[RMDB]
RNA sequence: GGGAACGACUCGAGUAGAGUCGAAAAUACUUCAACAAUCAUUUUACCACAUGGUCCUCACUUACUCUCAGCUGCCUCAUAUGUGUCACCUCACAAGUAAUCAAAUAAAAUGGGCAUGUGGCUAAGCUUUGUAAAUAGUGAAAACAUGAAUGUCAAAACCUAUACGUAGCUUCGGCUACGUAUAGGUAAAAGAAACAACAACAACAAC
Reactivity to DMS in 0.01 (KOAc 150mM, MgCl2 10mM, bicine 150mM(pH8.5), 24C), signal-to-noise 1, nucleotides 027 to 156: u010a040c010u000u010c010a170a050c070a080a030u080c130a120u000u000u000u000a210c020c030a050c010a050u000g050g020u000c020c070u010c030a090c070u010u000a080c060u010c010u020c030a040g070c010u010g030c010c020u010c070a150u040a060u010g030u010g040u000c010a050c080c010u000c130a020c070a030a140g000u000a080a100u000c130a050a110a240u020a060a020a120a070u010g010g010g010c060a080u000g030u010g000g000c010u000a030a110g000c060u000u000u000g010u020a010a050a090u000a040g040u010g000a060a030a050a020c110a040u000g030a000a050u000g010u000c040a030a100a180
Reactivity to 2A3 in 0.01 (KOAc 150mM, MgCl2 10mM, bicine 150mM(pH8.5), 24C), signal-to-noise 4, nucleotides 027 to 156: u070a010c040u080u140c050a090a080c030a070a160u100c050a070u050u100u110u160a100c050c000a050c020a050u010g070g040u070c010c020u020c030a040c010u050u060a050c000u010c000u010c060a030g010c010u050g000c020c000u030c020a080u080a060u190g050u000g030u030c020a020c040c020u060c010a040c040a040a040g040u120a090a130u210c080a040a050a060u130a130a120a030a070u100g000g000g020c010a000u010g010u010g040g000c010u040a050a000g010c000u100u040u060g050u110a050a100a090u060a030g040u030g060a010a050a010a030c040a020u080g040a120a030u170g080u180c060a010a070a120
The record gives the reactivity of an RNA of 207 nucleotides to DMS and 2A3.
It was measured as part of the RMDB library OK3TST.
For 2A3, 1,750 sequencing reads were counted.
For 2A3 the reverse transcriptase was SuperScript II with manganese.